An RNA of 177 nucleotides, treated with DMS and 2A3 and read out base by base. It was measured as part of the RMDB libraries RFM100 and RFMREP. The RNA was probed in 150 mM KOAc, 10 mM MgCl2 and 150 mM bicine (pH 8.5) at 24 C. For 2A3 the reverse transcriptase was SuperScript II with manganese.
[RMDB]
RNA sequence: GGGAACGACUCGAGUAGAGUCGAAAACAUGUAAAGCAACUUCAGACCAUAGUAAUAAGGAAUAAUAUGAAAAAUUGAAAUAUUAUGGUUUGAAGAUGGUUUACAUGGUAGUACGUUGGUCCUUUACAUUGAGAUCCAAUUUCGAUUGGAUCUCAAUAAAAGAAACAACAACAACAAC
Reactivity to DMS in 0.01 (KOAc 150mM, MgCl2 10mM, bicine 150mM(pH8.5), 24C), signal-to-noise 2, nucleotides 027 to 126: c010a000u000g020u010a000a010a000g010c030a010a090c010u000u000c000a000g000a000c000c000a000u000a000g010u010a000a030u030a100a180g010g020a130a060u000a060a100u030a170u000g000a050a050a050a060a130u000u000g000a160a090a050u010a010u000u000a020u000g000g010u010u000u000g000a020a020g000a020u010g020g010u000u000u010a000c010a000u000g000g000u010a060g000u000a070c140g010u000u000g010g000u000c030c010u000u000u020a090c100
Reactivity to 2A3 in 0.01 (KOAc 150mM, MgCl2 10mM, bicine 150mM(pH8.5), 24C), signal-to-noise 2, nucleotides 027 to 126: c010a010u000g000u000a000a000a000g090c000a000a010c000u000u000c000a000g010a000c000c000a000u000a000g020u010a030a040u100a150a010g060g040a130a050u190a190a040u110a170u220g110a070a090a090a120a160u120u070g030a020a080a000u060a000u010u010a000u000g000g000u000u010u000g000a000a000g000a000u000g010g090u020u010u000a010c000a000u000g050g000u000a030g050u040a020c160g000u000u100g000g000u070c000c000u030u000u010a100c110